The record gives the reactivity of an RNA of 177 nucleotides to DMS. The RNA was probed in 150 mM KOAc, 10 mM MgCl2 and 150 mM bicine (pH 8.5) at 24 C. The DMS profile rests on 624 reads. Values cover nucleotides 27 to 126.
RNA sequence: GGGAACGACUCGAGUAGAGUCGAAAAGAAGGAUAGUUCGCUAUCCUUCAAACCCUCCGAAAGGCAAAUGUGUUAGAUGCCCUCUAACACAUAAACCGGGCAAAACAGUACCGUUCGCGGUACUGAAUCCUAACUUUCGGUUCGCCGAAAGUUAGGAAAAAGAAACAACAACAACAAC
Reactivity to DMS in 0.01 (KOAc 150mM, MgCl2 10mM, bicine 150mM(pH8.5), 24C), signal-to-noise 1, nucleotides 027 to 126: g000a000a030g000g010a000u000a000g030u000u010c180g020c010u000a000u000c000c010u000u000c020a000a090a200c020c000c000u020c060c050g010a050a080a070g000g020c060a070a300a000u000g000u000g020u000u020a020g010a010u010g020c300c270c090u030c010u000a030a030c000a000c000a010u010a050a110a070c090c020g000g040g120c270a070a020a050a140c060a000g020u000a010c010c000g000u000u000c240g020c030g000g020u000a000c020u000g000a040a030